[RMDB]
This 207-nucleotide RNA was probed chemically with 2A3. Reactivities are given for positions 27 through 156.

RNA sequence: GGGAACGACUCGAGUAGAGUCGAAAAUCAAAAGUCUGUUGAAAUCCCUAAGUUAUAGCAGCCAACAAUUGAUAUGAAAUGGCAAUAAAAAUGUAAGUUCAUCUGCUUCAUGAGCCUUAAGGAAAAAAACUCAGAACCAGACACUUUUUAGCCCCUACGCUAUAAAAUGGUUCGCCAUUUUAUAGCGAAAAGAAACAACAACAACAAC
Reactivity to 2A3 in 0.01 (KOAc 150mM, MgCl2 10mM, bicine 150mM(pH8.5), 24C), signal-to-noise 1, nucleotides 027 to 156: u050c020a110a000a210a000g040u020c110u130g050u040u020g250a180a180a180u050c050c000c000u050a070a020g000u020u160a050u160a170g050c040a000g000c110c070a040a100c070a190a190u150u270g090a130u150a140u300g040a070a080a030u020g130g000c080a050a000u180a100a050a000a020a000u200g010u170a090a090g000u000u030c020a050u030c150u050g020c000u000u040c020a110u050g000a000g090c010c000u070u130a050a020g010g020a000a220a140a000a070a070a000c040u020c040a000g000a040a000c020c000a020g000a040c020a080c000u030u040u030u000u170a010g040c010c000c040c020u040a000